[RMDB]
RNA sequence: GGGAACGACUCGAGUAGAGUCGAAAACUCGGCGACCAGGGCGCGGGUCAGCCAGGGGGCCCGGGCGCGGAUCAAACGCCAACGCGCCCAGCAUUUCCAGUCUUCAACGUUAACGCUCGCCCACAGCAUUGGAGCAUCAUUUCGAUGAUGCUCCAAUAAAAGAAACAACAACAACAAC
Reactivity to 2A3 in 0.01 (KOAc 150mM, MgCl2 10mM, bicine 150mM(pH8.5), 24C), signal-to-noise 4, nucleotides 027 to 126: c020u020c030g020g000c020g020a010c000c010a020g030g010g000c010g010c030g000g010g000u010c000a030g000c010c020a030g030g010g010g020g010c020c020c090g000g020g000c020g010c000g020g030a070u160c120a080a120a020c110g050c060c010a020a010c010g000c000g000c000c030c010a000g000c020a050u040u110u050c020c000a040g030u030c040u080u060c110a070a090c080g050u040u160a090a000c060g010c040u030c010g020c000c000c010a050c040a010g150c010
Reactivity to DMS in 0.01 (KOAc 150mM, MgCl2 10mM, bicine 150mM(pH8.5), 24C), signal-to-noise 2, nucleotides 027 to 126: c020u000c020g010g000c040g050a060c020c000a080g000g000g040c000g010c100g020g000g020u000c000a030g010c000c030a060g000g000g000g000g000c020c020c060g040g000g000c030g050c080g000g000a160u020c100a040a180a160c130g000c120c060a080a110c020g000c010g000c010c010c010a170g000c040a050u000u010u000c020c000a070g000u020c030u070u010c120a050a080c130g010u020u020a050a060c060g000c020u010c030g020c010c000c030a130c190a050g000c060
Overview: Chemical mapping of a 177-nucleotide RNA with 2A3 and DMS. The reactions ran in a buffer of 150 mM KOAc, 10 mM MgCl2 and 150 mM bicine (pH 8.5), at 24 C. The DMS profile rests on 2,826 reads.